[RMDB]
RNA sequence: GGGAACGACUCGAGUAGAGUCGAAAAACUGUUUCGACAGUGUAACUUCCUAAGUCUCGUCGAAGAACGAAUACGCGAGGCUCAACAGCUAUCGGAAACGAUAGACAUGAGCCUCAUUCGGGAGACGAGAUAUGGAGAUGGGAGACUUCGGUCUCAAAAGACUCUUACGAUUCGUCGUAAGAGUCUUAAAAGAAACAACAACAACAAC
Reactivity to 2A3 in 0.01 (KOAc 150mM, MgCl2 10mM, bicine 150mM(pH8.5), 24C), signal-to-noise 3, nucleotides 027 to 156: a000c020u020g030u040u100u090c180g080a020c020a030g010u040g050u160a030a100c010u150u070c020c000u050a150a050g000u000c000u010c000g010u020c020g150a300a010g020a040a000c010g020a020a010u140a150c200g040c090g120a010g000g010c010u010c010a100a170c080a080g060c000u020a000u010c000g010g060a070a050a030c010g000a000u000a000g090a010c030a090u060g000a010g000c000c000u000c000a000u000u010c000g000g000g000a020g000a000c000g000a000g000a000u010a040u010g030g000a050g010a050u130g110g160g010a030g020a020c000u040u040c280g100g010u000c000u040c000a110a090
Reactivity to DMS in 0.01 (KOAc 150mM, MgCl2 10mM, bicine 150mM(pH8.5), 24C), signal-to-noise 1, nucleotides 027 to 156: a000c030u000g010u000u000u000c210g000a130c030a060g010u020g000u000a110a080c010u000u000c000c010u000a070a230g000u000c010u000c000g000u000c010g050a170a290g000a100a090c030g010a010a050u000a080c210g060c300g050a030g000g050c000u010c000a030a150c090a200g010c020u030a000u000c000g010g000a180a190a300c000g010a020u000a000g000a000c040a300u000g000a060g010c000c000u000c030a030u000u000c000g000g020g000a180g000a000c010g000a010g050a040u010a150u000g000g010a070g000a030u020g010g030g000a060g000a030c020u000u010c260g060g040u000c010u000c010a010a050